[RMDB]
Source: RMDB library OK3TST, as collected in RNAgym. This 207-nucleotide RNA was probed chemically with 2A3.
RNA sequence: GGGAACGACUCGAGUAGAGUCGAAAAAGGGACACCUCACUCACAUUUUACCAACAGAGUGAGAGUGAGGUUAACCUCUCAUUUCUGUUGGUGAACGCUGAAGUUAGAGGUUGAGAACACUGACAACAGCGUUCAUAGUUGUGAGUGUUCUGUCCCACCUGGAUCAGUACUUCGGUACUGAUCCAGGAAAAGAAACAACAACAACAAC
Reactivity to 2A3 in 0.01 (KOAc 150mM, MgCl2 10mM, bicine 150mM(pH8.5), 24C), signal-to-noise 1, nucleotides 027 to 156: a000g000g000g000a020c020a030c000c010u040c000a000c000u000c000a020c000a030u140u130u030u200a020c000c000a000a000c000a000g020a000g010u010g010a060g030a020g040u160g020a120g000g120u050u060a030a020c020c000u000c000u000c000a020u110u300u000c000u010g000u000u000g000g010u000g020a000a000c010g010c000u000g000a060a000g000u030u020a030g050a160g020g000u020u040g050a080g020a050a000c000a000c040u000g030a000c000a060a010c000a010g000c010g040u030u030c020a030u060a030g160u070u060g000u000g000a000g000u020g000u000u000c000u040g000u000c000c020c000a020
Values cover nucleotides 27 to 156.